[RMDB]
RNA sequence: GGGAACGACUCGAGUAGAGUCGAAAAGAAAAUUAUCACUGGUUAUAUAAGGUCUUAGGACUUCUUUAUCAAAAGCUACCUGGGGGUGGAAGCCAGUGGGCUGGUGAGGUUGGGAACACUGAGCUCACUAUUAAAAUUCGUUCGCGAAUUUUAAUAGAAAAGAAACAACAACAACAAC
Reactivity to DMS in 0.01 (KOAc 150mM, MgCl2 10mM, bicine 150mM(pH8.5), 24C), signal-to-noise 2, nucleotides 027 to 126: g000a080a100a120a090u010u010a010u000c020a090c050u000g010g010u010u010a030u020a080u000a070a130g000g010u000c020u000u000a130g020g000a120c020u010u000c030u000u000u010a080u020c130a070a060a080a110g000c090u010a040c040c020u010g020g010g010g000g020u010g000g010a100a060g000c030c030a040g020u000g010g000g010c060u000g000g000u000g010a040g000g000u000u020g000g000g010a080a070c070a060c030u000g000a040g000c010u000c040a080
Structure probing data (DMS) for a 177-nucleotide construct. Source: RMDB library OK2TRN, as collected in RNAgym. In probing experiments dimethyl sulfate is read out at A N1 and C N3, which are open when not base-paired. The reactions ran in a buffer of 150 mM KOAc, 10 mM MgCl2 and 150 mM bicine (pH 8.5), at 24 C. The DMS profile rests on 1,496 reads.